[RMDB]
RNA sequence: GGGAACGACUCGAGUAGAGUCGAAAAAGAGCUACAUUAUUUCGAGGAACGAAAAGAAAAAGACUCUCUUCGUCACAAGAAAAGAAGAAGACGAUGGAGGACUUCUUGUCUCCUCUUGGUUCUUUUCUGGGAUGGAACCUGGGGAAAUAAACCAGAAUGAACAAAAGAUAUUCGUAUCUUUUGUUCAAAAAGAAACAACAACAACAAC
Reactivity to 2A3 in 0.01 (KOAc 150mM, MgCl2 10mM, bicine 150mM(pH8.5), 24C), signal-to-noise 4, nucleotides 027 to 156: a000g050a020g020c050u070a050c060a140u120u110a200u090u270u160c040g010a020g020g010a070a030c050g050a070a040a020a060g040a030a080a020a010a010g040a010c010u010c010u010c050u060u010c010g020u000c020a050c040a140a110g100a130a180a070a020g100a050a030g020a080a040g010a000c000g010a010u040g020g010a010g000g050a020c010u020u010c000u050u060g030u010c040u000c070c000u000c010u020u030g010g000u010u000c000u020u050u030u010c010u030g010g020g020a030u070g010g030a020a020c020c040u030g040g000g010g030a040a080a060u080a020a060a000c010c000a010g050a050a090
Reactivity to DMS in 0.01 (KOAc 150mM, MgCl2 10mM, bicine 150mM(pH8.5), 24C), signal-to-noise 2, nucleotides 027 to 156: a050g010a090g020c030u010a090c050a160u010u000a100u000u010u000c040g010a120g010g000a070a060c070g000a040a030a050a060g000a050a040a080a080a120g010a280c070u000c000u010c030u020u000c020g010u010c010a150c030a100a150g020a090a040a070a130g000a090a170g000a110a080g010a040c090g010a060u000g030g000a050g020g010a100c030u010u000c080u010u000g010u000c010u000c000c000u000c000u000u000g000g010u010u000c010u010u000u000u000c020u000g000g010g010a100u010g010g000a030a130c000c020u000g010g000g010g000a050a030a080u000a030a040a110c020c020a100g020a090a230
Source: RMDB library OK3TST, as collected in RNAgym. Chemical mapping of a 207-nucleotide RNA with 2A3 and DMS. The RNA was probed in 150 mM KOAc, 10 mM MgCl2 and 150 mM bicine (pH 8.5) at 24 C. For DMS, 3,205 sequencing reads were counted. For 2A3, 3,143 sequencing reads were counted. Values cover nucleotides 27 to 156. For 2A3 the reverse transcriptase was SuperScript II with manganese.